[RMDB]
RNA sequence: GGGAACGACUCGAGUAGAGUCGAAAAGUCUAAAUUUAAGGAUUAGCGUUCUCAAUCAUGCGACACUUUAAUCGCUAUCCCAUAUUUAAUUAGGGAAUGGGACUCUUCACCGAGGUUGUAAAAUGAGUCACGAAACAUUGUUCGCAAUGUUUCGUGAAAAAGAAACAACAACAACAAC
Reactivity to 2A3 in 0.01 (KOAc 150mM, MgCl2 10mM, bicine 150mM(pH8.5), 24C), signal-to-noise 2, nucleotides 027 to 126: g040u010c020u060a050a050a190u040u120u080a110a100g020g010a050u030u150a060g000c000g040u170u010c070u000c040a090a100u180c130a070u260g000c000g130a020c030a010c100u170u070u060a050a040u020c040g000c030u040a050u000c050c010c010a000u000a200u140u140u070a300a130u100u160a060g010g000g000a060a000u030g010g000g000a030c000u020c000u000u100c000a020c060c040g030a020g010g000u020u000g120u160a080a070a010a000u060g070a000g150
Reactivity to DMS in 0.01 (KOAc 150mM, MgCl2 10mM, bicine 150mM(pH8.5), 24C), signal-to-noise 2, nucleotides 027 to 126: g000u000c030u000a040a050a070u070u020u010a130a070g010g000a050u000u000a020g020c050g030u000u020c030u030c030a240a100u010c130a080u000g000c090g000a040c110a060c110u000u000u010a070a040u000c000g070c080u010a070u050c000c000c060a050u020a070u000u030u040a030a070u010u010a090g000g000g040a120a110u010g090g040g000a100c060u000c010u000u010c040a110c030c040g000a110g000g010u050u010g000u010a010a080a140a100u000g000a050g010
This 177-nucleotide RNA was probed chemically with 2A3 and DMS. The RNA was probed in 150 mM KOAc, 10 mM MgCl2 and 150 mM bicine (pH 8.5) at 24 C. For 2A3 the reverse transcriptase was SuperScript II with manganese. For DMS the reverse transcriptase was MarathonRT.